[RMDB]
Record summary: Chemical mapping of a 177-nucleotide RNA with 2A3 and DMS. For 2A3 the reverse transcriptase was SuperScript II with manganese. Values cover nucleotides 27 to 126. For 2A3, 814 sequencing reads were counted.

RNA sequence: GGGAACGACUCGAGUAGAGUCGAAAACAGGAAUUUUUACAUCAAAGAGAUCAAUAGGGUUAGAAACAUCAACCGAUGACCUAUAUACAGCAGCUCUUGAAAUCGGGCGUGGUUUGAGAUUUCAGGGCAUUCGGAGGUCUUUCGAGACCUCCGAAUGAAAAGAAACAACAACAACAAC
Reactivity to 2A3 in 0.01 (KOAc 150mM, MgCl2 10mM, bicine 150mM(pH8.5), 24C), signal-to-noise 3, nucleotides 027 to 126: c040a000g180g050a070a060u070u190u090u070u130a100c080a060u130c090a100a160a000g020a040g000a090u080c030a010a080u040a150g030g010g000u050u110a070g190a110a110a010c040a000u100c010a030a200c080c010g010a020u070g020a040c000c030u060a070u030a030u000a150c080a040g070c040a010g020c020u000c000u080u100g000a010a030a030u040c040g010g050g000c180g060u120g070g000u010u120u050g160a160g010a030u000u020u000c040a020g010g000g000
Reactivity to DMS in 0.01 (KOAc 150mM, MgCl2 10mM, bicine 150mM(pH8.5), 24C), signal-to-noise 2, nucleotides 027 to 126: c080a160g000g010a060a030u000u010u010u000u000a160c100a110u010c080a150a120a060g000a100g060a050u010c090a000a120u040a030g000g020g030u000u040a090g000a080a090a090c000a030u000c040a070a110c240c090g000a040u000g000a020c030c010u000a050u000a090u040a120c250a090g000c220a070g020c000u000c020u000u020g000a000a060a030u010c010g000g020g000c180g010u020g000g000u060u010u000g040a190g000a000u000u000u000c020a060g000g000g030